[RMDB]
The record gives the reactivity of an RNA of 207 nucleotides to 2A3 and DMS. The RNA was probed in 150 mM KOAc, 10 mM MgCl2 and 150 mM bicine (pH 8.5) at 24 C. Reactivities are given for positions 27 through 156. It was measured as part of the RMDB library RNAMAK. For 2A3 the reverse transcriptase was SuperScript II with manganese.

RNA sequence: GGGAACGACUCGAGUAGAGUCGAAAACACGGAUUCGUCCGUGACAAACUCCUAAGUCCUCAACAGCGAGCUUUGUCAGAUGUGGUCGGAAACGACCAUACAUCUUGGAUUUAAGCUCGACAUGAGGAUAUGGACACAUUUAUGCUUCGGCAUAAAAUAUUUCAUGCCAGUUCGCUGGCAUGAAAUAAAAAGAAACAACAACAACAAC
Reactivity to 2A3 in 0.01 (KOAc 150mM, MgCl2 10mM, bicine 150mM(pH8.5), 24C), signal-to-noise 3, nucleotides 027 to 156: c020a000c010g000g030a030u070u110c220g090u040c130c000g000u020g040a000c050a010a190a060c040u000c000c000u050a090a000g030u000c000c010u030c050a080a120c040a160g110c000g010a000g000c000u030u010u000g010u020c000a010g000a010u010g010u010g010g000u000c010g000g040a070a100a100c000g000a000c000c000a000u090a020c000a010u000c000u040u120g140g000a060u030u220u270a000a000g000c000u000c000g020a020c000a040u070g000a010g000g010a000u010a000u020g020g010a030c070a010c020a240u050u050u030a010u010g000c000u040u060c270g080g000c000a010u020a010a010a020a000
Reactivity to DMS in 0.01 (KOAc 150mM, MgCl2 10mM, bicine 150mM(pH8.5), 24C), signal-to-noise 1, nucleotides 027 to 156: c020a050c000g040g010a080u000u000c210g020u030c000c000g110u010g010a070c100a050a110a080c040u010c020c000u000a080a300g030u020c000c000u000c000a090a120c100a180g010c000g010a030g000c000u000u000u000g000u000c000a040g030a020u010g050u020g050g040u000c000g000g010a150a140a290c030g040a000c010c000a030u020a070c050a030u000c030u000u000g040g000a020u000u000u000a010a000g020c000u010c000g000a070c060a220u000g030a000g050g020a070u000a060u020g000g020a120c140a140c070a140u020u000u010a000u000g030c000u020u000c300g060g000c020a020u010a020a040a060a290